Chemical mapping of a 177-nucleotide RNA with 2A3 and DMS.
The reactions ran in a buffer of 150 mM KOAc, 10 mM MgCl2 and 150 mM bicine (pH 8.5), at 24 C.
It was measured as part of the RMDB libraries RFM100 and RFMREP.
[RMDB]
RNA sequence: GGGAACGACUCGAGUAGAGUCGAAAAUCGACUGUACUCGAACGGGAUCAUUUCUAUAGUGAAUCCGAUCGUAUUGGGCUACAGCUCUUGACAACACCUCUGUCCGUGACGAUGAGUUAUCCAUCCCUGUAGGGGUAAAUUUCGAUUUACCCCUACAAAAAGAAACAACAACAACAAC
Reactivity to 2A3 in 0.01 (KOAc 150mM, MgCl2 10mM, bicine 150mM(pH8.5), 24C), signal-to-noise 9, nucleotides 027 to 126: u180c010g000a000c000u040g040u160a000c000u000c000g010a020a030c010g020g000g010a020u020c020a030u030u120u050c170u170a230u160a130g050u040g080a100a070u020c010c030g030a070u040c020g010u040a110u060u180g040g010g000c030u110a050c030a030g010c000u020c000u060u080g070a040c030a080a020c020a080c030c020u050c030u060g030u030c020c020g060u050g060a040c020g030a050u070g010a010g040u010u010a030u010c020c020a030u020c010c010c010
Reactivity to DMS in 0.01 (KOAc 150mM, MgCl2 10mM, bicine 150mM(pH8.5), 24C), signal-to-noise 7, nucleotides 027 to 126: u020c010g010a020c000u000g000u000a010c000u000c000g020a050a230c060g010g000g010a090u010c010a030u000u010u010c140u020a110u020a040g000u000g010a060a050u000c020c030g010a140u000c030g010u010a130u010u010g010g000g010c050u010a070c150a100g010c040u000c060u010u000g020a060c120a080a080c110a070c080c030u000c030u010g000u000c020c050g010u000g000a050c080g000a060u000g000a150g010u000u000a070u010c040c060a100u000c010c010c020